[RMDB]
RNA sequence: GGGAACGACUCGAGUAGAGUCGAAAAUUCCAUUUGAGUAUCCUGAAAACGGGCUUUUCAGCAUGGAACGUACAUAUUAAAUAGUAGGAGUGCAUAGUGGCCCGUAUAGCAGGCAUUACCAUUCCUGAAAACGUGAAAAGGUUCGCCUUUUCACGAACAUUUCAUCAGUCUUCGGACUGAUGAAAUGAAAAGAAACAACAACAACAAC
Reactivity to 2A3 in 0.01 (KOAc 150mM, MgCl2 10mM, bicine 150mM(pH8.5), 24C), signal-to-noise 4, nucleotides 027 to 156: u080u030c040c000a050u140u030u020g040a080g000u010a010u050c010c000u020g020a050a060a000a000c000g010g010g050c000u160u090u080u150c080a020g000c010a010u050g090g080a150a020c040g090u070a010c020a090u230a070u150u300a200a160a190u180a090g050u020a010g040g120a070g030u000g000c020a050u070a200g090u090g040g020c030c000c010g000u000a000u020a020g010c010a000g000g000c000a010u030u070a000c000c020a010u030u080c000c020u040g050a120a130a040a030c010g000u020g000a010a000a000a000g020g000u040u090c170g100c010c000u000u000u000u000c000a000c000g000a020a000
Reactivity to DMS in 0.01 (KOAc 150mM, MgCl2 10mM, bicine 150mM(pH8.5), 24C), signal-to-noise 2, nucleotides 027 to 156: u000u010c020c030a130u000u000u000g010a120g020u000a070u010c040c000u000g000a090a050a180a080c030g040g010g060c030u000u000u010u000c000a300g050c040a080u010g010g020a130a080c010g010u000a120c040a120u010a150u010u010a110a040a270u000a120g030u000a090g000g000a270g020u000g010c050a090u000a120g030u010g020g000c010c010c010g010u000a020u000a080g030c020a010g000g000c170a060u000u010a050c040c020a170u010u010c000c000u000g000a140a030a070a170c030g000u010g000a040a000a020a040g000g040u020u000c300g030c000c000u000u000u000u000c010a010c020g010a020a050